[RMDB]
RNA sequence: GGGAACGACUCGAGUAGAGUCGAAAAGUUCCGGGACAUCAUGCUGGCUGAUGACCAGUUCCAUCGGCCUGCUACCGUCUCCAUGGUCUUAGGAGCAGAUGUUUAUCCAAAGGUUAUCCAAUCCGGAAUCACUGCCUCCCUUCGGGGAGGCAGUGAUAAAAGAAACAACAACAACAAC
Reactivity to 2A3 in 0.01 (KOAc 150mM, MgCl2 10mM, bicine 150mM(pH8.5), 24C), signal-to-noise 1, nucleotides 027 to 126: g000u000u000c000c010g010g030g010a010c000a020u110c020a050u130g000c020u030g030g000c000u000g000a000u000g080a110c000c010a040g010u100u170c050c000a050u030c030g000g000c000c000u000g010c010u050a050c040c050g190u060c000u000c000c050a180u210g150g150u120c100u160u280a120g000g040a000g000c000a010g000a000u000g070u000u000u090a100u070c020c040a100a040a000g020g080u120u060a090u040c000c050a050a040u060c030c080g000g020a010
Annotation:
Chemical mapping of a 177-nucleotide RNA with 2A3. 2A3 adducts were read by reverse transcription with SuperScript II with manganese. The reactions ran in a buffer of 150 mM KOAc, 10 mM MgCl2 and 150 mM bicine (pH 8.5), at 24 C. Values cover nucleotides 27 to 126.